About this RNA:
Chemical mapping of a 207-nucleotide RNA with 2A3 and DMS. For DMS the reverse transcriptase was MarathonRT. Source: RMDB library OK3TST, as collected in RNAgym. Conditions: 150 mM KOAc, 10 mM MgCl2 and 150 mM bicine (pH 8.5), 24 C. The DMS profile rests on 2,068 reads. The 2A3 profile rests on 587 reads.
RNA sequence: GGGAACGACUCGAGUAGAGUCGAAAAGGCCAUCGUUUUUUCCAGACCAUUUUCGAUGGCCAUAGGUCUGGAUUAUAGUUCAAUCGCCGAGAGGCGUACAGUUAGAGUAGCGAGCUCGAAGCACGCGACCGCUAUGAGCUCGCGAAGGUCGCGGAGACCUAGCAUAGUCCUUCGGGACUAUGCUAGGAAAAGAAACAACAACAACAAC
Reactivity to 2A3 in 0.01 (KOAc 150mM, MgCl2 10mM, bicine 150mM(pH8.5), 24C), signal-to-noise 1, nucleotides 027 to 156: g010g000c000c010a000u030c060g080u060u040u000u000u150u000c010c000a000g010a000c010c000a150u040u080u140u200c080g010a060u040g000g000c010c010a040u080a010g000g010u010c030u030g000g000a010u020u020a070u110a040g010u080u050c080a080a110u040c030g000c000c000g050a060g000a010g110g020c000g020u040a020c010a030g020u080u130a010g020a030g080u030a020g000c000g000a010g000c010u000c040g040a110a020g000c040a010c090g160c060g080a060c010c050g000c000u040a060u120g000a010g010c000u010c020g000c010g010a000a000g000g010u080c000g010c030g070g030a040g000a020
Reactivity to DMS in 0.01 (KOAc 150mM, MgCl2 10mM, bicine 150mM(pH8.5), 24C), signal-to-noise 1, nucleotides 027 to 156: g000g000c010c000a000u000c040g010u000u000u000u000u000u000c010c020a030g030a060c020c010a260u010u000u000u010c040g000a060u020g020g000c020c030a070u000a030g040g020u000c020u020g000g020a170u000u000a160u000a140g030u010u000c040a120a140u010c000g040c000c010g000a250g020a210g010g020c000g000u000a060c060a100g000u000u010a120g000a130g030u000a210g000c000g020a020g000c010u010c010g010a100a120g010c060a090c000g030c110g020a110c200c030g000c000u000a110u000g000a060g030c010u000c010g050c010g010a060a000g020g060u000c010g000c000g000g000a270g010a190